Chemical mapping of a 207-nucleotide RNA with 2A3. 2A3 adducts were read by reverse transcription with SuperScript II with manganese. The RNA was probed in 150 mM KOAc, 10 mM MgCl2 and 150 mM bicine (pH 8.5) at 24 C.
RNA sequence: GGGAACGACUCGAGUAGAGUCGAAAAACAGUACCAGCUGAUACGGCAGCUGGUACUGAACUUUCAUGGAGUUAAGAAACCACGUAAACAAAGCGGAACCGAAAAGCUAAACGAGUAGGAAGAAUAAAUAGGUACCACCACUUCGGUGGUGGUACAACCCAUGGAGAAUCUUCGGAUUCUCCAUGGGAAAAGAAACAACAACAACAAC
Reactivity to 2A3 in 0.01 (KOAc 150mM, MgCl2 10mM, bicine 150mM(pH8.5), 24C), signal-to-noise 2, nucleotides 027 to 156: a050c000a000g000u000a010c000c000a020g080c000u000g020a070u070a130c060g060g040c040a000g000c000u000g000g000u000a000c000u000g000a010a000c000u020u160u050c110a150u160g070g000a030g050u060u060a220a050g080a140a060a000c100c000a040c030g030u110a100a100a100c100a110a080a040g040c030g010g010a060a060c020c000g000a000a000a000a000g030c050u210a250a060a000c000g000a000g000u000a010g040g010a050a020g100a090a080u200a100a050a040u150a010g240g000u000a000c000c010a000c000c000a000c000u080u030c180g070g000u010g030g030u000g000g010u000a000c000a000a000